[RMDB]
RNA sequence: GGGAACGACUCGAGUAGAGUCGAAAAAGCGAUGAUACGUCAUCGCAACGAUUGCCUGAUCGUAAAACAGGAAACGGCCGUGGCCGCGACCACGUAAAAAAGCGUAACGUGGUCUACGGACCACGAAAAAAGCGCGGAACGUUCGCGUUCCGCGCAAUCAGAGUCUAUAGUUCGCUAUAGACUCUGAAAAAGAAACAACAACAACAAC
Reactivity to 2A3 in 0.01 (KOAc 150mM, MgCl2 10mM, bicine 150mM(pH8.5), 24C), signal-to-noise 2, nucleotides 027 to 156: a000g000c010g010a000u000g000a000u030a090c110g090u000c010a000u000c000g010c000a010a020c000g000a000u000u040g020c010c000u020g000a040u010c050g100u240a010a030a010a020c020a010g020g050a030a080a120c150g110g010c090c010g000u000g010g010c030c000g000c000g000a000c000c000a000c010g000u050a060a050a010a040a020a000g100c060g030u060a040a030c010g000u000g000g040u000c010u030a030c120g030g030a120c010c000a000c000g000a010a000a000a000a000a000g000c000g000c020g020g020a000a000c010g040u110u130c230g000c000g110u000u000c010c000g000c020g000c010a000a000